Record summary:
The data come from the RNA Mapping Database (RMDB), library OK2TST. Chemical mapping of a 177-nucleotide RNA with DMS. Values cover nucleotides 27 to 126. The DMS profile rests on 640 reads.
RNA sequence: GGGAACGACUCGAGUAGAGUCGAAAAUUUUCGAGUCAAAAUGGUAAUAUAAACUCGCUUUCUUUAUAUUUACACUUUUAGCUAUAUCAUCAAGUGUUGUACCGUCAUACCCCUUCUCUGAAAAUAAAUUGGAAUUGAAGUUCGCUUCAAUUCCAAUAAAAGAAACAACAACAACAAC
Reactivity to DMS in 0.01 (KOAc 150mM, MgCl2 10mM, bicine 150mM(pH8.5), 24C), signal-to-noise 1, nucleotides 027 to 126: u000u000u020u000c050g000a050g030u010c090a090a060a150a030u000g020g010u000a010a040u010a040u000a030a020a060c100u030c170g010c170u010u000u010c020u010u000u000a040u000a040u010u010u020a060c000a030c010u020u000u000u000a110g010c080u000a130u040a120u000c040a040u010c080a050a130g010u010g000u000u000g020u000a040c020c030g000u000c070a130u000a190c040c000c010c020u000u000c030u000c010u000g010a020a080a080a060u000a060a120